Structure probing data (2A3) for a 207-nucleotide construct. For 2A3, 592 sequencing reads were counted. It was measured as part of the RMDB library RNAMAK. For 2A3 the reverse transcriptase was SuperScript II with manganese.
RNA sequence: GGGAACGACUCGAGUAGAGUCGAAAAGGGGUCCCUUCGGCCCUUGGAUUUAACAAACUUUUGACGAGCUGAAGCCUCCACGGCUCGAUAAGUUUGUUUGUCAGGGUGCGAAGGGACGGAGGCACCCAAAAACCUUUGGAGUUCGCUCCAAAGGUAAACAGGGUGUUAUCUUCGGAUAACACCCUGUAAAAGAAACAACAACAACAAC
Reactivity to 2A3 in 0.01 (KOAc 150mM, MgCl2 10mM, bicine 150mM(pH8.5), 24C), signal-to-noise 1, nucleotides 027 to 156: g050g000g030g000u000c060c010c000u000u000c040g040g020c050c020c000u110u110g190g010a220u300u300u200a020a000c000a000a000a000c000u190u030u200u300g150a170c080g000a010g000c000u000g050a070a000g000c000c020u020c000c010a020c020g000g030c000u000c000g010a030u020a030a000g000u040u000u000g010u020u050u020g070u070c060a020g010g010g050u150g300c010g010a000a000g000g000g000a000c000g000g000a000g000g000c050a100c000c020c030a090a110a050a020a020c000c010u000u000u050g000g000a020g010u090u070c070g170c130u000c000c010a010a000a000g000g010u000a080a000